[RMDB]
RNA sequence: GGGAACGACUCGAGUAGAGUCGAAAAGCAUGGUCGACUACCCGUAUAGGCUUUGGCACUAUCCUUGUACCAUCAAUUACACCAUAUUCAAAGUCAGGAUGUACGUGGGAGGGGUCGAGCACAGGCUGGAAGCGGCCUGCAACUGGACGCGGGGCGAAAACUCAUGCCAGUUCGCUGGCAUGAGUUUAAAAGAAACAACAACAACAAC
Reactivity to 2A3 in 0.01 (KOAc 150mM, MgCl2 10mM, bicine 150mM(pH8.5), 24C), signal-to-noise 1, nucleotides 027 to 156: g040c040a020u140g000g080u020c030g000a060c040u100a150c000c000c000g020u140a080u090a020g110g000c000u150u060u160g000g010c100a000c100u100a160u180c000c000u050u250g040u180a060c020c020a040u060c020a050a180u190u110a100c000a050c000c020a050u180a210u300u270c040a190a130a100g080u120c030a030g020g000a020u010g000u050a030c100g060u100g000g020g070a090g000g000g060g000u030c000g020a000g030c040a000c010a060g000g050c000u020g020g000a100a000g000c040g020g000c000c030u000g000c000a020a080c040u160g000g000a040c020g020c000g010g000g100g030c150g040a100